[RMDB]
RNA sequence: GGGAACGACUCGAGUAGAGUCGAAAAAGGGUUAGCCGUUGACCUGAACUGCCUGGUGCCACCUCCCCAGACUCCUGGGGCCUUGCCCUGGCACCAACAGCCACCUCCAUCUUCAUCAUUCACUCGCACAUUCACCCAGCAGUGCUUUUUGGGCAUCCUCUAUGAAGUGAUUCGUCACUUCAUAGAGAAAAGAAACAACAACAACAAC
Reactivity to DMS in 0.01 (KOAc 150mM, MgCl2 10mM, bicine 150mM(pH8.5), 24C), signal-to-noise 2, nucleotides 027 to 156: a070g000g010g000u010u010a100g010c020c040g010u020u000g010a060c040c010u000g000a080a100c030u000g000c020c040u000g010g030u010g030c040c020a060c040c020u000c020c020c030c040a170g010a180c140u000c150c050u010g010g020g020g030c300c040u000u010g020c130c050c040u010g020g020c010a030c030c000a040a030c040a030g030c030c020a100c010c010u010c020c020a120u000c040u000u000c020a110u000c060a100u010u000c040a060c020u000c050g000c070a070c020a160u010u000c010a130c030c000c020a180g040c040a030g020u000g000c030u000u000u000u000u000g010g010g050c050a140u000c040
Reactivity to 2A3 in 0.01 (KOAc 150mM, MgCl2 10mM, bicine 150mM(pH8.5), 24C), signal-to-noise 5, nucleotides 027 to 156: a000g080g000g010u040u020a040g050c050c030g040u070u100g030a040c010c010u030g030a040a040c030u020g040c040c010u000g010g000u010g000c030c000a130c060c030u040c020c010c000c010a040g050a270c120u170c140c000u060g000g000g000g000c020c050u070u080g010c040c000c010u000g010g000c000a000c000c000a000a030c010a000g050c010c030a040c000c010u000c030c000a070u030c040u100u070c020a110u030c010a070u130u080c040a060c080u070c050g020c020a040c010a100u100u070c020a050c020c040c010a020g030c040a020g020u020g010c040u030u100u050u110u090g030g010g000c020a020u070c000